[RMDB]
RNA sequence: GGGAACGACUCGAGUAGAGUCGAAAAGGGGUCCUUGCGGGUCCCUUGGAUUUAGCAAUGAGGUAUACUGAAGCCUCCACGGUAUACUACCCACCAUUGCUUGUCAGGGAUGCGCAAGGACGGAGGCACCCAAAAGCCAGUUGUUCGCAACUGGCAAUCAUAAUCUUCGGUUCGCCGAAGAUUAUGAAAAAGAAACAACAACAACAAC
Reactivity to 2A3 in 0.01 (KOAc 150mM, MgCl2 10mM, bicine 150mM(pH8.5), 24C), signal-to-noise 1, nucleotides 027 to 156: g000g020g040g010u000c000c000u020u070g020c020g050g300g060u010c000c000c020u000u170g030g010a020u230u140u300a000g000c000a000a010u000g010a010g000g000u000a000u000a010c000u020g050a070a050g030c000c000u010c020c000a010c000g000g000u000a000u000a000c010u040a070c080c060c040a030c030c000a000u000u000g000c030u020u010g010u030c150a220g020g000g000a000u060g300c000g020c000a000a010g000g000a000c000g010g010a000g000g000c000a050c010c000c000a070a220a000a020g000c000c000a000g000u000u030g030u070u100c170g020c190a000a000c000u000g000g000c000a000a000
Chemical mapping of a 207-nucleotide RNA with 2A3. Reactivities are given for positions 27 through 156. The data come from the RNA Mapping Database (RMDB), library RNAMAK. Reactivities are rounded to 0.1 and cut off at 0 and 3.